This 177-nucleotide RNA was probed chemically with 2A3 and DMS. For 2A3, 4,814 sequencing reads were counted.
RNA sequence: GGGAACGACUCGAGUAGAGUCGAAAAACGAUGUCGUUCGCGACAUCGUAAAUUGUAUAACCUUGCUUGAAGUCUACUUGGUUGUAAAGCGAGACAUGUCAGUGAGAGUCCUAUUCGUAGGACUCAAACUGGUACCUGAAUUCGUUCAGGUACCAGUAAAAGAAACAACAACAACAAC
Reactivity to 2A3 in 0.01 (KOAc 150mM, MgCl2 10mM, bicine 150mM(pH8.5), 24C), signal-to-noise 4, nucleotides 027 to 126: a000c000g000a000u000g000u000c020g020u030u060c150g000c000g110a000c010a010u010c000g000u000a010a000a030u100u060g100u020a110u030a080a050c000c000u000u050g010c000u020u030g020a070a010g020u010c010u040a100c080u290u210g080g010u070u050g060u070a050a000a000g040c030g010a000g020a010c040a060u240g090u090c030a030g050u040g160a170g000a000g030u000c000c000u010a020u010u040c190g050u020a000g000g000a000c000u000c000a000a010
Reactivity to DMS in 0.01 (KOAc 150mM, MgCl2 10mM, bicine 150mM(pH8.5), 24C), signal-to-noise 5, nucleotides 027 to 126: a020c000g010a010u000g010u000c000g020u010u010c230g030c010g010a010c000a000u000c000g010u000a010a050a060u000u010g010u010a080u000a120a110c070c010u000u000g010c020u000u000g000a100a160g010u000c020u000a070c130u020u000g010g010u000u000g010u000a060a030a030g010c030g000a030g000a070c080a050u000g020u010c040a050g010u000g020a230g000a020g000u000c000c000u000a020u000u010c180g010u000a010g010g010a010c000u000c000a010a070
The RNA was probed in 150 mM KOAc, 10 mM MgCl2 and 150 mM bicine (pH 8.5) at 24 C. For DMS, 7,669 sequencing reads were counted.